Record summary: Conditions: 150 mM KOAc, 10 mM MgCl2 and 150 mM bicine (pH 8.5), 24 C. An RNA of 207 nucleotides, treated with 2A3 and read out base by base.
[RMDB]
RNA sequence: GGGAACGACUCGAGUAGAGUCGAAAAUGAAAAUCCUAACAUCUUUCUCCAGAGACGAAAAAAGUGGCUUGCCUAUGAAAAGAAUGAGAACUAGACUUAACGCCCGUCUUACUGGCAAUAAGAAGCUUUUAGACAAUGGAGGAGUGUCCUGUAAGGACGCUCCCCGCUGAUUCGUCAGCGGGGAGCGAAAAGAAACAACAACAACAAC
Reactivity to 2A3 in 0.01 (KOAc 150mM, MgCl2 10mM, bicine 150mM(pH8.5), 24C), signal-to-noise 1, nucleotides 027 to 156: u160g030a050a050a000a070u040c040c000u050a030a050c010a110u150c000u020u180u000c000u000c000c000a000g010a050g000a080c010g000a100a110a000a000a050a000g010u050g100g010c110u030u010g010c000c000u060a100u140g080a000a070a110a110g050a060a000u180g050a040g020a190a030c030u040a000g030a120c000u110u060a120a040c050g150c080c060c030g050u000c020u000u050a040c010u010g000g040c000a000a080u110a080a090g110a050a000g020c000u030u000u000u000a050g000a050c110a150a030u020g000g000a000g000g070a010g020u120g060u050c010c000u070g040u070a100a000g030g000a010
Background: For 2A3 the reverse transcriptase was SuperScript II with manganese. For 2A3, 453 sequencing reads were counted.